[RMDB]
RNA sequence: GGGAACGACUCGAGUAGAGUCGAAAAACGCUGACCAUACGUGGUCAGCGAAAUAGCUUCAAUUCCGUAGUGCAUUGCAGUGUGCUUUAGACGAACUGCAAGCAAUGUGGAAGUGAAGCGAUUCUAAUAAGCGUCUGAAUUUCGAUUCAGACGCUUAAAAAGAAACAACAACAACAAC
Reactivity to DMS in 0.01 (KOAc 150mM, MgCl2 10mM, bicine 150mM(pH8.5), 24C), signal-to-noise 1, nucleotides 027 to 126: a130c030g070c000u010g010a000c010c000a050u040a040c160g020u000g010g000u000c000a000g080c000g010a010a030a050u020a100g000c000u000u000c000a010a040u000u000c000c010g010u000a020g010u000g000c000a120u010u000g010c000a010g000u000g020u000g020c100u010u070u010a100g020a190c070g040a070a060c000u000g010c000a050a000g010c000a000a000u000g000u000g020g000a010a000g000u000g000a000a000g000c000g020a040u010u000c000u000a050a290
Reactivity to 2A3 in 0.01 (KOAc 150mM, MgCl2 10mM, bicine 150mM(pH8.5), 24C), signal-to-noise 3, nucleotides 027 to 126: a000c010g020c000u000g000a000c010c010a000u030a020c270g180u040g010g000u000c000a000g000c010g000a000a000a000u070a000g000c010u000u000c000a020a030u010u020c010c070g030u010a070g040u030g090c190a300u010u000g000c000a000g000u030g060u120g090c040u130u210u290a120g050a140c050g030a090a050c000u000g000c000a000a000g010c000a000a010u020g000u000g020g000a000a020g010u010g030a000a000g000c000g000a050u030u000c010u000a050a070